The record gives the reactivity of an RNA of 207 nucleotides to 2A3 and DMS. For 2A3, 1,100 sequencing reads were counted. DMS adducts were read by reverse transcription with MarathonRT. For 2A3 the reverse transcriptase was SuperScript II with manganese. The RNA was probed in 150 mM KOAc, 10 mM MgCl2 and 150 mM bicine (pH 8.5) at 24 C. High DMS reactivity at an A or C suggests that its Watson-Crick edge is free.

RNA sequence: GGGAACGACUCGAGUAGAGUCGAAAAAGCACUGGUACGAUACGUCGUACCAGUGCAGACGUUGGGAUGGAACGCAAUUAAAUACAUGUGUGACGUGUAUUUGCGAACGACGUAAUUAUUUUUCAAAAUCACGCUAUCGUGUUCGCACGAUAGCGAAGUAUCUCAUCACGUUCGCGUGAUGAGAUACAAAAGAAACAACAACAACAAC
Reactivity to 2A3 in 0.01 (KOAc 150mM, MgCl2 10mM, bicine 150mM(pH8.5), 24C), signal-to-noise 2, nucleotides 027 to 156: a010g000c000a000c000u000g000g010u000a000c000g000a000u000a030c240g110u000c000g000u000a000c000c010a020g000u000g000c000a000g000a000c020g020u000u000g050g000g040a110u170g070g060a180a000c010g000c000a010a040u150u080a140a150a030u050a000c000a030u050g190u080g090u110g300a070c030g030u010g010u000a000u000u000u080g000c000g010a010a010c000g000a030c000g000u000a160a000u160u200a140u050u140u020u010u020c120a120a060a070a080u180c110a050c080g010c000u000a000u000c000g010u000g010u060u020c140g010c070a000c010g030a010u010a000g000c000g000a000a000
Reactivity to DMS in 0.01 (KOAc 150mM, MgCl2 10mM, bicine 150mM(pH8.5), 24C), signal-to-noise 1, nucleotides 027 to 156: a090g000c020a030c000u010g040g030u000a020c000g020a090u000a300c280g020u010c000g080u000a000c000c000a000g010u030g020c020a000g000a050c250g010u000u000g000g030g000a150u000g010g030a130a150c020g030c010a140a060u000u000a000a000a040u000a020c000a040u000g000u000g080u000g030a060c060g130u000g000u000a020u010u000u000g000c080g010a020a200c040g090a280c000g040u000a030a060u010u000a110u000u010u000u000u000c050a010a000a110a070u000c080a240c090g000c020u000a020u000c030g010u010g080u000u000c280g010c000a020c010g000a020u000a010g000c000g000a000a030